[RMDB]
RNA sequence: GGGAACGACUCGAGUAGAGUCGAAAAGACUGGUAUUCGUACCAGUCCUCGCGGGGUCGCUGUAGAGCGAAGAACACUGCUGAAGCCUCCACGGUUUCGAGUGGGAGCUCGCAGAUAGCGACGGAGGCACCCACACCAAGCUGGUUCGCCAGCUUAAAACUAGUUCUAUAUUCGUAUAGAACUAGUUAAAAGAAACAACAACAACAAC
Reactivity to DMS in 0.01 (KOAc 150mM, MgCl2 10mM, bicine 150mM(pH8.5), 24C), signal-to-noise 3, nucleotides 027 to 156: g000a030c010u010g000g020u010a040u000u010c260g030u000a010c000c000a020g000u000c000c010u000c060g000c080g010g000g050g020u000c020g030c020u010g030u000a090g010a140g010c030g010a060a140g020a160a110c030a070c020u000g030c030u010g020a060a050g010c000c010u000c110c240a150c220g010g030u000u010u000c050g000a090g050u000g020g010g010a230g030c040u000c010g000c040a010g010a110u000a070g010c040g000a060c040g020g010a110g050g000c030a150c010c000c020a120c060a120c050c040a040a120g020c010u000g010g030u000u000c300g020c040c030a020g010c000u010u000a020a090
Reactivity to 2A3 in 0.01 (KOAc 150mM, MgCl2 10mM, bicine 150mM(pH8.5), 24C), signal-to-noise 6, nucleotides 027 to 156: g040a000c010u000g000g000u020a040u080u160c240g030u050a020c000c000a010g000u000c000c000u010c020g120c040g020g080g040g020u020c010g000c020u010g030u100a100g020a030g060c030g030a070a030g020a050a020c030a010c050u210g040c140u260g060a020a000g000c010c010u110c280c120a140c210g010g000u020u050u060c020g010a010g000u000g010g010g000a030g060c010u010c000g000c020a020g040a180u110a040g020c010g010a010c000g010g030a020g010g020c050a090c000c010c000a020c000a010c040c020a020a000g000c000u000g000g050u050u090c160g060c070c000a000g000c010u010u020a050a070